The record gives the reactivity of an RNA of 177 nucleotides to 2A3. The reactions ran in a buffer of 150 mM KOAc, 10 mM MgCl2 and 150 mM bicine (pH 8.5), at 24 C. The data come from the RNA Mapping Database (RMDB), library OK1LIB.
RNA sequence: GGGAACGACUCGAGUAGAGUCGAAAACGUUCAGGUCACGCGCACCGCUACUUCCUCCGAGGACUGUGAGCAAUGGCUUUUUUUGGUCAAUGCGUAAAAACUGGUAUGCACGCUCUGCCUGUGCAGACGACCCGUCCGAGUUCGCUCGGACGGGUCGAAAAGAAACAACAACAACAAC
Reactivity to 2A3 in 0.01 (KOAc 150mM, MgCl2 10mM, bicine 150mM(pH8.5), 24C), signal-to-noise 1, nucleotides 027 to 126: c070g000u050u060c060a020g030g150u180c000a000c070g000c000g020c050a040c020c020g000c080u080a020c000u010u040c000c040u000c010c030g050a050g020g030a000c020u060g000u050g200a030g000c000a000a070u070g050g000c000u130u000u000u080u000u060u160g000g000u000c040a100a050u090g020c000g040u160a000a000a000a120a120c050u010g040g000u170a010u040g030c050a000c030g000c010u010c010u030g000c000c000u040g000u080g000c000a010g000a010